RNA sequence: GGGAACGACUCGAGUAGAGUCGAAAAGCGAAAGUUGCCAUGAGACCGUAACUUUCGUAGUCAUUCAUAAAGGGGCAGGUCUCGCUCUUUUGUCAUUGCGGUUGCCUAGAGGCAUGGUCGUUUACCGAAAAGAGCUCAUUCUUCGGAAUGAGCUCAACAACAUAGGUGCGUUCGCGCACCUAUGUUGAAAAGAAACAACAACAACAAC
Reactivity to DMS in 0.01 (KOAc 150mM, MgCl2 10mM, bicine 150mM(pH8.5), 24C), signal-to-noise 1, nucleotides 027 to 156: g080c020g010a020a000a020g030u000u000g000c020c020a230u000g000a100g020a080c060c010g020u000a050a010c000u000u000u000c010g040u000a110g040u010c070a100u000u010c050a090u010a010a100a050g020g010g010g050c070a090g000g010u010c000u010c030g020c120u000c030u070u000u000u000g000u010c040a150u000u010g030c040g020g010u000u000g010c030c060u010a090g020a180g040g050c030a070u010g030g000u000c020g010u030u000u000a180c020c000g010a150a060a080a220g040a020g010c000u000c000a020u010u000c010u000u000c300g040g020a010a030u000g010a010g000c010u000c000a000a020
Reactivity to 2A3 in 0.01 (KOAc 150mM, MgCl2 10mM, bicine 150mM(pH8.5), 24C), signal-to-noise 3, nucleotides 027 to 156: g050c000g000a000a000a000g000u030u000g010c020c020a150u170g080a050g010a140c040c000g010u010a000a000c010u020u020u010c010g000u020a000g010u000c020a040u190u030c000a050u170a130a120a030g000g020g010g010c020a020g000g060u010c010u000c030g010c010u030c000u010u130u050u110g090u060c040a110u050u140g010c040g040g040u070u030g010c010c020u100a100g010a080g070g000c020a020u070g010g030u010c000g030u040u000u020a290c020c000g030a050a070a050a080g000a000g000c000u010c000a000u000u000c000u030u080c160g070g000a010a000u010g000a000g000c000u000c000a000a000
Source: RMDB library M2RFPK, as collected in RNAgym. The record gives the reactivity of an RNA of 207 nucleotides to DMS and 2A3. The reactions ran in a buffer of 150 mM KOAc, 10 mM MgCl2 and 150 mM bicine (pH 8.5), at 24 C.